[RMDB]
RNA sequence: GGGAACGACUCGAGUAGAGUCGAAAAGCCCUUGAAGCCCGACGCUCAGCGCAACGAACACACCACAACCACAGACAUGAGACGGCCCCCGCCGGGACGGCAAUCCCAGUGCGAGGGCCUGACCACCAAAGCGAACAUCGUUCGCGAUGUUCGCUUUAAAAGAAACAACAACAACAAC
Reactivity to DMS in 0.01 (KOAc 150mM, MgCl2 10mM, bicine 150mM(pH8.5), 24C), signal-to-noise 3, nucleotides 027 to 126: g020c020c000c010u010u010g000a160a130g030c030c000c010g010a080c090g000c010u030c010a080g040c140g050c100a080a040c130g010a030a050c130a130c020a040c000c050a030c130a060a100c030c010a010c120a110g020a130c160a100u000g030a080g000a300c250g010g020c000c010c000c000c000g010c020c010g010g000g020a030c020g000g070c220a100a300u000c010c000c000a020g010u050g060c000g060a110g020g040g000c010c020u000g000a090c130c110a070c120c070
Reactivity to 2A3 in 0.01 (KOAc 150mM, MgCl2 10mM, bicine 150mM(pH8.5), 24C), signal-to-noise 2, nucleotides 027 to 126: g020c010c000c000u010u200g100a030a000g040c020c020c010g010a010c090g020c010u040c050a050g040c040g010c070a040a050c040g030a080a010c050a000c000a020c040c020a060c020a030a030c070c020a070c010a030g080a080c040a110u150g020a050g010a050c060g020g000c010c000c000c000c010g010c000c000g040g000g000a010c020g110g110c010a000a070u000c000c030c000a020g010u110g090c000g000a010g000g000g000c000c000u000g020a000c000c020a030c040c010

This 177-nucleotide RNA was probed chemically with DMS and 2A3. For DMS the reverse transcriptase was MarathonRT. It was measured as part of the RMDB library RFM100. The RNA was probed in 150 mM KOAc, 10 mM MgCl2 and 150 mM bicine (pH 8.5) at 24 C.